[RMDB]
RNA sequence: GGGAACGACUCGAGUAGAGUCGAAAAUCUACGUUUCGACGUAGAGGCUAUUCCUAAGUCUAACGGGAGAUCCGCCGACGAUCGGUGUCGGAAACGACACCGGGAGGACGGAUCUUUGAUCGUUAGAUAUGGAUUUUAACUAGCGUUCGCGCUAGAAUCUUAUGCUGGUGUUCGCACCAGCAUAAGAAAAAGAAACAACAACAACAAC
Reactivity to 2A3 in 0.01 (KOAc 150mM, MgCl2 10mM, bicine 150mM(pH8.5), 24C), signal-to-noise 2, nucleotides 027 to 156: u000c010u000a010c010g000u050u070u220c220g100a030c000g010u000a010g000a020g020g000c070u200a110u140u080c000c000u060a170a040g030u000c000u000a000a000c000g010g030g000a020g020a000u010c000c000g000c010c010g220a300c000g020a040u000c000g020g010u000g010u000c010g030g000a130a040a030c000g000a000c000a000c000c000g010g000g000a020g000g010a010c000g000g000a000u000c030u000u000u010g040a020u050c000g000u000u000a000g000a000u030a030u040g030g000a050u030u070u110u300a170a090c010u010a010g000c000g010u050u040c280g020c010g000c160u020a000g080a030a050
Reactivity to DMS in 0.01 (KOAc 150mM, MgCl2 10mM, bicine 150mM(pH8.5), 24C), signal-to-noise 1, nucleotides 027 to 156: u000c010u000a000c000g020u000u000u010c240g030a080c030g010u000a000g020a070g000g030c120u000a180u000u000c000c030u040a100a300g010u000c000u010a020a010c000g020g000g000a030g010a000u000c010c010g030c000c000g010a190c070g020a230u000c000g000g010u000g040u000c000g000g010a080a090a250c020g000a020c010a030c000c000g030g000g020a280g030g010a040c010g000g000a000u010c010u000u000u000g000a030u000c000g010u000u000a010g050a040u000a200u000g000g000a110u000u000u000u000a010a300c000u000a010g020c000g020u000u030c300g020c010g070c000u010a010g000a080a170
Conditions: 150 mM KOAc, 10 mM MgCl2 and 150 mM bicine (pH 8.5), 24 C. Structure probing data (2A3 and DMS) for a 207-nucleotide construct. Reactivities are rounded to 0.1 and cut off at 0 and 3.